[RMDB]
RNA sequence: GGGAACGACUCGAGUAGAGUCGAAAAUGUAAUUUAGGGGGCGCUGUUUGUAGGAAGCAUGCUACAGAGUACAGAGAGUAUAUGGAAGCAUAUAAUCUUGUCUCUGCAUCAGGUUUCCGCCUUUGGUCAAGACGGUAGUUCGCUACCGUCAAAAGAAACAACAACAACAAC
Reactivity to 2A3 in 0.01 (KOAc 150mM, MgCl2 10mM, bicine 150mM(pH8.5), 24C), signal-to-noise 7, nucleotides 027 to 129: u090g020u060a010a110u070u100u210a140g030g010g000g000g000c020g010c030u040g050u100u130u120g060u060a060g000g000a000a000g020c010a010u020g000c000u020a020c010a010g010a010g020u130a020c020a010g200a000g000a000g110u020a010u000a010u010g020g050a090a020g090c020a000u010a000u010a010a050u000c000u000u010g010u000c000u000c000u010g010c010a020u030c020a000g050g000u000u000u000c010c010g020c000c010u150u140u080g050g010u070c030a060a040
Reactivity to DMS in 0.01 (KOAc 150mM, MgCl2 10mM, bicine 150mM(pH8.5), 24C), signal-to-noise 5, nucleotides 027 to 129: u040g030u000a060a090u040u020u040a110g040g040g010g000g000c070g010c020u010g030u000u000u050g030u000a090g050g000a020a000g000c000a050u000g020c050u020a110c020a030g030a020g000u000a020c000a080g000a010g020a050g040u000a030u020a030u030g020g000a140a100g050c000a020u030a010u020a050a070u030c020u010u010g000u000c000u010c000u000g000c060a050u020c050a060g000g000u000u000u000c030c040g040c050c040u000u030u010g040g020u000c080a030a060
The record gives the reactivity of an RNA of 170 nucleotides to 2A3 and DMS. It was measured as part of the RMDB library 15KLIB. DMS adducts were read by reverse transcription with MarathonRT. The 2A3 profile rests on 22,529 reads.